[RMDB]
RNA sequence: GGGAACGACUCGAGUAGAGUCGAAAAAAAGCAAUGAGCCUAUUGAUCUGGAAGAUAUUAGGAUUGGUCAGAACCCCGAUUUUGUGAAUAAACCUAUUGAGUUUUGUAGCAGUGAAUUCGGUAUCACUGUCCUUUGCUUUUUCGAAAGCAAAGGACAAAAAGAAACAACAACAACAAC
Reactivity to DMS in 0.01 (KOAc 150mM, MgCl2 10mM, bicine 150mM(pH8.5), 24C), signal-to-noise 1, nucleotides 027 to 126: a060a030a070g010c070a040a110u000g000a150g010c000c010u010a060u000u010g000a070u000c020u000g000g010a060a070g010a050u000a040u000u010a060g000g010a070u010u010g030g010u000c060a070g020a130a180c100c020c000c040g030a100u000u000u000u030g010u000g010a160a070u010a020a040a010c010c020u010a190u030u020g000a070g020u010u000u000u000g010u000a130g010c020a030g010u020g020a010a060u020u020c070g020g010u000a110u020c050a100c070